The record gives the reactivity of an RNA of 177 nucleotides to 2A3. Reactivities are given for positions 27 through 126. Conditions: 150 mM KOAc, 10 mM MgCl2 and 150 mM bicine (pH 8.5), 24 C. It was measured as part of the RMDB library OK1LIB.
RNA sequence: GGGAACGACUCGAGUAGAGUCGAAAAAGUAUGUGCGGAAUAAGGUGGACAGUAGAGUACGGUUGUUUAGACAGAUCAGUUUCGUAAUCAUGAGUUUUCGUCUUACCACGCUCGCCGUGUCCGCGCCGAGUGGUGCUCGAUUCGUCGAGCACCACUCAAAAGAAACAACAACAACAAC
Reactivity to 2A3 in 0.01 (KOAc 150mM, MgCl2 10mM, bicine 150mM(pH8.5), 24C), signal-to-noise 1, nucleotides 027 to 126: a000g300u300a050u060g000u060g020c120g050g050a150a000u110a000a090g050g000u100g030g000a160c000a000g130u270a110g000a000g200u010a080c280g020g010u050u000g070u180u300u000a130g000a030c000a000g130a050u080c000a000g060u090u240u000c000g020u140a050a110u060c000a080u000g000a000g300u070u020u110u160c110g040u030c000u000u000a000c000c000a050c280g000c000u000c000g000c040c090g140u000g090u000c000c000g030c000g000c000c000
High 2A3 reactivity points to a flexible backbone, as in loops and unpaired stretches.
For 2A3, 365 sequencing reads were counted.